Chemical mapping of a 177-nucleotide RNA with 2A3. Values cover nucleotides 27 to 126. Conditions: 150 mM KOAc, 10 mM MgCl2 and 150 mM bicine (pH 8.5), 24 C. Source: RMDB library OK1LIB, as collected in RNAgym.

RNA sequence: GGGAACGACUCGAGUAGAGUCGAAAAACGGGCAGUGGCGAUGGCAACGCGGCAGCCGCAGGGUCGACUUCUUCGCAGCCGCAACAGACGGGAAACGGGCAAAGAGGGGAACUCGUUCUGUUGGAAGGCCGCUGAUCAGUUUCGACUGAUCAGCGGCAAAAGAAACAACAACAACAAC
Reactivity to 2A3 in 0.01 (KOAc 150mM, MgCl2 10mM, bicine 150mM(pH8.5), 24C), signal-to-noise 1, nucleotides 027 to 126: a000c080g000g040g000c060a070g020u040g060g000c030g020a120u030g000g100c060a000a000c110g000c000g020g030c030a040g060c010c030g020c000a030g000g000g000u040c010g050a040c010u050u050c000u080u140c000g000c000a060g050c000c000g000c000a000a020c000a030g020a000c040g000g000g060a080a200a060c050g010g050g000c140a080a130a000g130a040g010g000g000g010a020a010c020u030c000g120u250u000c000u030g010u030u020g000g030a060a010g140